RNA sequence: GGGAACGACUCGAGUAGAGUCGAAAAUGCCGGAUAAGUCGGCAGGUAAUGACCACGUGCUAGACGCAGCAGGCUACCCAAUCGCAUUCCUGUAUCCUGUUAAAAAGAAGUUCAACCCGAUUGCCGCCGUAAGAGGCUGAUAUGUCCGAUAGCAAAAACAGAAGAUACGUUUCGACGUAUCUUCUGUAAAAGAAACAACAACAACAAC
Reactivity to 2A3 in 0.01 (KOAc 150mM, MgCl2 10mM, bicine 150mM(pH8.5), 24C), signal-to-noise 2, nucleotides 027 to 156: u030g000c000c000g020g030a110u080a120a080g090u140c000g010g000c010a030g040g020u110a100a080u090g120a080c020c020a060c050g010u010g030c030u040a050g000a030c000g000c030a000g030c060a020g020g040c060u090a090c010c020c000a030a050u110c070g000c040a060u050u150c000c000u030g010u040a020u030c010c010u000g010u080u050a050a060a040a000a030g040a180a000g040u140u150c110a110a010c000c000c010g030a030u020u140g010c050c020g000c000c000g000u000a030a010g000a010g060g000c000u020g010a000u010a060u170g030u030c090c070g000a060u070a120g070c020a070a060a000a000
Reactivity to DMS in 0.01 (KOAc 150mM, MgCl2 10mM, bicine 150mM(pH8.5), 24C), signal-to-noise 1, nucleotides 027 to 156: u000g010c000c000g030g000a230u010a080a250g040u000c030g020g040c000a030g050g030u000a150a070u000g020a260c050c080a060c030g000u000g000c020u000a070g020a170c110g030c000a110g000c030a050g020g000c120u000a120c000c000c010a110a160u010c070g020c100a200u000u000c020c010u000g000u000a050u000c030c030u010g030u000u020a030a020a050a140a160g010a140a110g000u000u000c040a020a140c010c010c020g010a110u000u000g040c020c010g010c000c080g040u000a080a140g000a170g020g000c000u010g010a060u000a030u000g000u000c020c010g020a140u000a080g000c060a020a060a070a120